[RMDB]
RNA sequence: GGGAACGACUCGAGUAGAGUCGAAAAGGCCAAACGAAUACGGCAGGAGUUGGGAAAAGCCAGAAACGACCAGCAUCAGUUGUGCGAUCAAAUCCUAGUGCUGGGCAAGUGCUACGAUCCUGUUUGAAUUAAUAAUCCGUUUCGACGGAUUAUUAAUAAAAGAAACAACAACAACAAC
Reactivity to DMS in 0.01 (KOAc 150mM, MgCl2 10mM, bicine 150mM(pH8.5), 24C), signal-to-noise 8, nucleotides 027 to 126: g020g010c010c020a080a090a110c160g010a120a090u010a120c110g000g010c020a030g000g010a050g010u000u010g000g000g000a090a080a090a060g010c020c040a120g000a070a100a100c160g000a060c010c010a020g000c010a030u000c080a070g010u010u010g010u000g010c140g000a090u010c130a040a060a160u010c090c020u000a080g010u000g000c010u010g010g000g010c040a070a070g010u010g010c020u000a060c080g010a080u000c020c020u000g010u000u000u000g010a100
Reactivity to 2A3 in 0.01 (KOAc 150mM, MgCl2 10mM, bicine 150mM(pH8.5), 24C), signal-to-noise 3, nucleotides 027 to 126: g050g050c000c000a020a100a000c090g050a080a060u140a160c050g010g000c030a010g020g000a110g040u300u190g060g010g070a020a170a040a010g000c020c000a030g130a010a120a020c050g030a010c010c010a000g000c010a010u040c020a030g090u240u150g060u130g130c060g010a010u070c090a100a100a050u080c010c030u010a040g010u030g000c000u020g000g020g000c010a100a010g050u120g130c000u020a010c020g030a030u020c000c010u020g040u050u080u160g030a030